An RNA of 177 nucleotides, treated with 2A3 and DMS and read out base by base.
For 2A3 the reverse transcriptase was SuperScript II with manganese.
The DMS profile rests on 1,253 reads.
Conditions: 150 mM KOAc, 10 mM MgCl2 and 150 mM bicine (pH 8.5), 24 C.
[RMDB]
RNA sequence: GGGAACGACUCGAGUAGAGUCGAAAAUUAAACCGGUACUAUCUAUGCGACUUGAAGCCUCCACGAGUCAAAACCGAAAGGGCAUAGAUAGUACGGCAUGAAGGAGGCACGUGCAAAAGAAAAAAAACCAUAAUAUCUGAUUCGUCAGAUAUUAUGGAAAAGAAACAACAACAACAAC
Reactivity to 2A3 in 0.01 (KOAc 150mM, MgCl2 10mM, bicine 150mM(pH8.5), 24C), signal-to-noise 2, nucleotides 027 to 126: u080u030a100a030a040c020c000g050g000u010a000c010u000a000u000c000u000a000u000g000c000g020a010c000u020u010g050a210a020g030c020c010u030c000c000a030c030g000a010g000u000c000a040a260a270a110c010c000g060a080a010a030g010g000g000c000a000u000a010g000a000u000a000g000u000a000c000g000g000c020a010u050g040a120a060g010g010a000g000g000c010a000c000g040u010g020c010a020a020a060a060g100a090a030a040a020a020a010a010a020
Reactivity to DMS in 0.01 (KOAc 150mM, MgCl2 10mM, bicine 150mM(pH8.5), 24C), signal-to-noise 2, nucleotides 027 to 126: u010u010a030a150a160c020c050g020g010u010a010c020u000a010u000c000u000a010u000g000c030g000a020c010u000u010g010a050a080g000c000c000u000c010c010a300c010g000a020g010u000c000a090a080a180a110c000c010g010a080a070a130g010g000g000c000a020u000a000g000a000u000a000g020u000a010c030g000g000c000a010u000g010a040a060g010g010a000g000g000c010a100c060g030u020g000c020a180a070a070a160g030a020a020a020a100a030a050a120a180